An RNA of 177 nucleotides, treated with 2A3 and DMS and read out base by base. Reactivities are given for positions 27 through 126. High 2A3 reactivity points to a flexible backbone, as in loops and unpaired stretches.
[RMDB]
RNA sequence: GGGAACGACUCGAGUAGAGUCGAAAAUAGUCGCAGUAUCAUGCGACUAGGUAUGAUCUCUAGCGCAUCGAUCUACUAGGAUCAUGGCUCAUGGUACAUCAUGCUAGGAUCUCACAUGGUACCCAUGCUAUGGGAUGCUCUUCGGAGCAUCCCAUAGAAAAGAAACAACAACAACAAC
Reactivity to 2A3 in 0.01 (KOAc 150mM, MgCl2 10mM, bicine 150mM(pH8.5), 24C), signal-to-noise 2, nucleotides 027 to 126: u040a020g000u010c020g000c000a000g070u160a150u300c120a200u090g000c000g000a000c000u010a000g020g060u040a030u110g020a020u020c150u000c000u080a020g000c080g000c120a150u120c170g060a020u080c010u040a110c060u130a110g140g000a010u010c010a070u040g030g010c030u030c070a040u140g040g020u050a060c040a020u030c000a010u040g060c010u030a060g040g000a210u000c030u050c020a100c010a040u110g030g030u090a090c070c000c000a040u180g000
Reactivity to DMS in 0.01 (KOAc 150mM, MgCl2 10mM, bicine 150mM(pH8.5), 24C), signal-to-noise 2, nucleotides 027 to 126: u000a000g030u000c010g030c010a050g000u000a110u020c260a190u000g010c000g010a020c000u000a020g000g030u020a040u000g010a040u000c010u010c010u010a000g000c080g000c300a090u010c270g000a020u000c110u010a060c070u010a060g010g000a030u000c020a080u010g000g020c130u000c090a040u040g000g010u010a010c060a000u000c010a100u000g020c030u000a040g010g000a010u010c010u000c090a130c080a080u030g010g010u000a120c060c000c000a090u000g000